The data come from the RNA Mapping Database (RMDB), library TTRDES. The record gives the reactivity of an RNA of 177 nucleotides to DMS. For DMS, 1,135 sequencing reads were counted. Reactivities are rounded to 0.1 and cut off at 0 and 3. Conditions: 150 mM KOAc, 10 mM MgCl2 and 150 mM bicine (pH 8.5), 24 C.

RNA sequence: GGGAACGACUCGAGUAGAGUCGAAAAGAUAUGGACUUCCAUGCAAGGCCUGAGUCGGAAACGACUCAAGGCUGAUGACCAUGGAGUCCUAAGUCAAAACUCAACACUGGUUCGCCAGUGUUGAGAACAGUGAGUAGCACUUCGGUGCUACUCACUGAAAAGAAACAACAACAACAAC
Reactivity to DMS in 0.01 (KOAc 150mM, MgCl2 10mM, bicine 150mM(pH8.5), 24C), signal-to-noise 1, nucleotides 027 to 126: g010a010u000a010u000g000g020a000c000u000u060c000c000a030u000g000c030a030a000g030g050c000c000u010g010a020g060u030c000g000g000a000a000a010c010g000a020c010u010c000a000a000g010g040c000u000g000a040u030g000a080c300c000a010u000g000g000a020g000u000c000c000u000a000a020g020u010c010a150a030a100a180c020u010c010a010a000c000a000c000u010g000g000u010u030c290g040c040c010a010g020u030g000u030u000g000a010g010a030a110